[RMDB]
Structure probing data (DMS and 2A3) for a 177-nucleotide construct. It was measured as part of the RMDB library TTRDEL. For 2A3 the reverse transcriptase was SuperScript II with manganese. The RNA was probed in 150 mM KOAc, 10 mM MgCl2 and 150 mM bicine (pH 8.5) at 24 C.
RNA sequence: GGGAACGACUCGAGUAGAGUCGAAAAGAUAUGGAUUCGAAACGCUCUUGGAUUUACUGCCAUGUCGGAAACGACAUGAUGUUGUCAGAGCGUCGAAUCCUAAGUCAAAGGUCCCUUCGGGGACCAAGUACCAGUUAAACUUCGGUUUAACUGGUACAAAAGAAACAACAACAACAAC
Reactivity to DMS in 0.01 (KOAc 150mM, MgCl2 10mM, bicine 150mM(pH8.5), 24C), signal-to-noise 5, nucleotides 027 to 126: g010a040u000a300u010g000g000a020u000u000c000g010a090a100a070c010g000c010u000c000u000u000g030g010a040u010u010u000a020c020u010g010c160c000a010u000g010u000c000g000g010a110a090a200c000g000a010c000a000u000g010a070u000g010u000u000g010u010c020a020g000a020g030c020g020u000c000g000a020a000u000c000c000u000a020a070g010u000c020a080a130a140g010g010u000c000c000c000u000u010c190g020g000g010g010a010c000c010a000a040
Reactivity to 2A3 in 0.01 (KOAc 150mM, MgCl2 10mM, bicine 150mM(pH8.5), 24C), signal-to-noise 5, nucleotides 027 to 126: g030a010u070a040u150g010g000a010u010u010c020g040a160a240a100c020g010c030u000c020u100u210g240g020a130u300u230u260a040c010u050g140c070c010a000u010g010u010c000g020g020a040a070a030c010g000a000c000a010u010g000a020u050g010u020u010g030u020c040a020g000a000g000c000g000u000c000g000a000a000u000c000c000u000a100a010g010u010c030a040a080a180g000g000u010c000c010c000u010u050c230g010g000g000g000a000c000c000a000a000